Structure probing data (DMS and 2A3) for a 177-nucleotide construct. For DMS the reverse transcriptase was MarathonRT. The data come from the RNA Mapping Database (RMDB), libraries RFM100 and RFMREP. The RNA was probed in 150 mM KOAc, 10 mM MgCl2 and 150 mM bicine (pH 8.5) at 24 C. Reactivities are rounded to 0.1 and cut off at 0 and 3. High DMS reactivity at an A or C suggests that its Watson-Crick edge is free.
RNA sequence: GGGAACGACUCGAGUAGAGUCGAAAAUUCUGAGGAUUAUUUUUCAAGAUAUCAAAACGAAGAUAAGUGGCUGCACAAACUUUUUUUAGCGAAUAUAUCGUUAUGUUAUCGGGUCUAGCACUCUAUCCACUCCACUAGAGUUCGCUCUAGUGGAGUGAAAAGAAACAACAACAACAAC
Reactivity to DMS in 0.01 (KOAc 150mM, MgCl2 10mM, bicine 150mM(pH8.5), 24C), signal-to-noise 1, nucleotides 027 to 126: u040u020c040u010g000a080g000g000a110u020u020a110u030u020u000u020u000c020a030a090g000a000u000a070u000c010a000a100a060a090c170g050a030a120g000a070u050a050a080g000u030g020g000c030u000g000c050a060c050a160a050a100c120u000u000u010u130u000u040u000a000g010c060g010a110a180u010a110u000a030u000c000g000u000u000a040u000g000u000u000a000u040c000g000g020g020u020c070u010a070g000c060a000c130u010c000u000a040u030c120
Reactivity to 2A3 in 0.01 (KOAc 150mM, MgCl2 10mM, bicine 150mM(pH8.5), 24C), signal-to-noise 4, nucleotides 027 to 126: u070u000c020u060g080a080g050g000a020u080u020a070u100u180u060u050u120c040a050a050g000a070u060a020u090c020a020a030a000a100c050g070a020a040g030a080u050a060a070g070u040g110g010c020u030g000c050a040c020a130a100a080c080u220u170u050u060u040u120u120a030g000c010g050a080a000u080a020u010a060u200c010g010u000u030a060u080g020u040u050a020u070c010g000g000g020u000c020u060a010g000c020a000c040u010c010u000a050u020c000
For DMS, 1,280 sequencing reads were counted.